[RMDB]
This 207-nucleotide RNA was probed chemically with 2A3 and DMS. The RNA was probed in 150 mM KOAc, 10 mM MgCl2 and 150 mM bicine (pH 8.5) at 24 C. Reactivities are given for positions 27 through 156. For DMS, 2,418 sequencing reads were counted.
RNA sequence: GGGAACGACUCGAGUAGAGUCGAAAACUCGCUCACUACGGUGAGUGAGAAUGCUUAAGCCUCAAUAAAGCUUGGCUUGAGUGCCUCAAGCAGAUAUAGACUGAAACAUUUAGUAUGGCCAAGCAGGGAGCAACGGCUCGAGUACGCUCGAGCCGAAGAUUAUGCUACGGUUCGCCGUAGCAUAAUCAAAAGAAACAACAACAACAAC
Reactivity to 2A3 in 0.01 (KOAc 150mM, MgCl2 10mM, bicine 150mM(pH8.5), 24C), signal-to-noise 4, nucleotides 027 to 156: c000u000c000g000c000u000c010a000c020u040a020c190g060g000u000g000a000g000u000g000a000g000a030a070u090g000c020u020u030a040a010g020c010c000u010c030a030a110u130a180a110a010g020c010u010u040g000g000c000u000u020g030a020g050u100g030c000c010u060c060a030a000g040c010a000g110a030u090a050u150a180g160a070c060u100g080a070a130a020c030a040u050u120u100a060g060u060a130u160g030g000c010c000a010a010g000c010a010g050g080g040a090g020c070a070a060c010g000g020c010u000c000g010a010g000u040a050c200g000c080u000c000g000a000g000c000c000g000a000a000
Reactivity to DMS in 0.01 (KOAc 150mM, MgCl2 10mM, bicine 150mM(pH8.5), 24C), signal-to-noise 2, nucleotides 027 to 156: c000u000c000g040c000u000c010a000c010u040a130c300g140g030u000g000a010g000u000g020a020g000a080a080u010g030c050u000u000a070a060g040c040c000u020c050a120a080u000a060a110a160g030c020u010u020g000g000c000u020u000g000a030g040u000g030c010c030u000c060a160a070g040c000a130g010a300u000a140u000a140g020a130c030u010g010a110a100a030c040a080u010u000u010a110g010u000a090u000g020g020c000c030a010a040g030c000a080g010g000g000a120g000c080a080a140c010g000g020c020u020c000g020a070g070u000a090c300g070c000u000c000g020a040g000c000c000g010a000a040